[RMDB]
RNA sequence: GGGAACGACUCGAGUAGAGUCGAAAAGCGAGGGCGACGGUCCUCAGUUCUCUCUAUUCUUUCUUGAAAGAGGAGACUGCUGGACCAAACGCCCGAGCCGGGAUGGGCCGCAUACCGAGCGAAGGAUAGGGUUUCGUGUUCGCACGAAACAAAAGAAACAACAACAACAAC
Reactivity to 2A3 in 0.01 (KOAc 150mM, MgCl2 10mM, bicine 150mM(pH8.5), 24C), signal-to-noise 8, nucleotides 027 to 129: g070c040g000a050g000g000g000c010g020a040c090g020g000u000c000c000u000c010a010g020u170u040c030u000c010u000c050u050a300u150u000c020u100u200u040c100u080u170g060a030a010a010g040a040g080g010a010g000a010c010u010g060c060u020g020g000a000c000c000a010a020a030c000g000c010c000c000g000a000g000c010c010g010g010g020a060u080g010g010g000c010c010g030c040a030u050a100c000c000g010a010g030c060g020a060a020g040g020a050u120a090g070g020
Reactivity to DMS in 0.01 (KOAc 150mM, MgCl2 10mM, bicine 150mM(pH8.5), 24C), signal-to-noise 7, nucleotides 027 to 129: g030c060g020a220g060g030g000c020g000a130c300g000g000u000c020c000u000c020a020g020u000u010c030u020c020u000c040u040a140u000u000c020u020u050u050c140u070u050g030a010a050a030g000a010g020g010a070g060a020c020u020g000c170u000g000g000a000c000c010a020a080a090c060g020c020c000c030g010a010g020c030c030g000g000g000a060u000g000g000g020c070c050g030c140a030u050a080c040c020g020a020g010c060g020a060a030g000g000a070u020a040g000g000
The record gives the reactivity of an RNA of 170 nucleotides to 2A3 and DMS. Reactivities are given for positions 27 through 129. The DMS profile rests on 42,859 reads. 2A3 adducts were read by reverse transcription with SuperScript II with manganese. For DMS the reverse transcriptase was MarathonRT. For 2A3, 21,939 sequencing reads were counted. The RNA was probed in 150 mM KOAc, 10 mM MgCl2 and 150 mM bicine (pH 8.5) at 24 C.